[RMDB]
RNA sequence: GGGAACGACUCGAGUAGAGUCGAAAACGACGAAGGGGUGCAUUCCGAAGAGCUGGCCUGGCGUCGUCCGGCUCCCUCGACCGCACCGGAGCGCUAGAAAAGGUCCUCGGACUUUCUUCUACUCCGACACAAUUGCUUAGUUCGCUAAGCAAUUGUGAAAAGAAACAACAACAACAAC
Reactivity to DMS in 0.01 (KOAc 150mM, MgCl2 10mM, bicine 150mM(pH8.5), 24C), signal-to-noise 2, nucleotides 027 to 126: c130g000a100c090g010a130a040g000g000g000g050u000g020c070a120u030u000c030c090g000a100a050g010a060g000c040u010g000g000c260c000u000g010g000c030g030u000c040g020u000c020c000g000g000c070u000c020c050c030u010c110g000a060c060c060g010c150a080c050c000g000g000a030g010c250g010c110u000a000g000a050a140a080a030g010g010u000c010c010u020c240g010g000a030c070u000u010u000c070u000u000c050u000a060c030u010c010c020g020a290
Reactivity to 2A3 in 0.01 (KOAc 150mM, MgCl2 10mM, bicine 150mM(pH8.5), 24C), signal-to-noise 1, nucleotides 027 to 126: c000g080a000c030g040a070a010g100g000g000g040u100g130c030a110u090u150c090c080g020a060a040g040a040g060c040u060g020g020c030c020u010g090g020c000g020u070c020g050u020c000c000g000g000c000u000c030c000c020u050c040g070a090c020c030g020c050a030c030c020g020g000a030g000c080g010c060u030a020g030a000a050a010a000g000g050u030c000c000u030c040g050g010a000c000u040u060u030c040u060u000c010u070a040c030u030c010c020g040a030